[RMDB]
RNA sequence: GGGAACGACUCGAGUAGAGUCGAAAAGCUACCUAAGGCAUUAGCAGGUAAUUUUGUUGAGCGGUAGGCUAUACCAACAACAUUCUCAUUGCUGUUCCGACUGAUCCAUUGCAUCAAAAGAUUGGGGAUAAUAUAUUCUUGUACAAAGGAAGCAUUGAUCUCAUUUGAGCUUCGGCUCAAAUGAGAUAAAAGAAACAACAACAACAAC
Reactivity to 2A3 in 0.01 (KOAc 150mM, MgCl2 10mM, bicine 150mM(pH8.5), 24C), signal-to-noise 1, nucleotides 027 to 156: g040c010u010a010c000c010u040a040a020g030g000c060a050u110u100a030g120c030a070g140g040u150a110a150u020u110u020u050g040u030u090g060a030g110c020g060g010u000a070g130g000c030u120a050u040a180c000c030a030a070c010a010a010c050a040u080u000c030u030c030a060u010u140g000c030u020g030u080u010c010c040g050a060c040u010g030a080u050c000c000a060u120u120g050c030a060u130c020a080a040a110a000g060a060u060u060g020g000g000g100a010u070a010a120u060a050u000a010u060u070c030u040u130g030u050a040c090a120a050a020g040g000a020a000g050c040a030u030u070g050
Chemical mapping of a 207-nucleotide RNA with 2A3. 2A3 adducts were read by reverse transcription with SuperScript II with manganese. Values cover nucleotides 27 to 156. It was measured as part of the RMDB library OK3TST.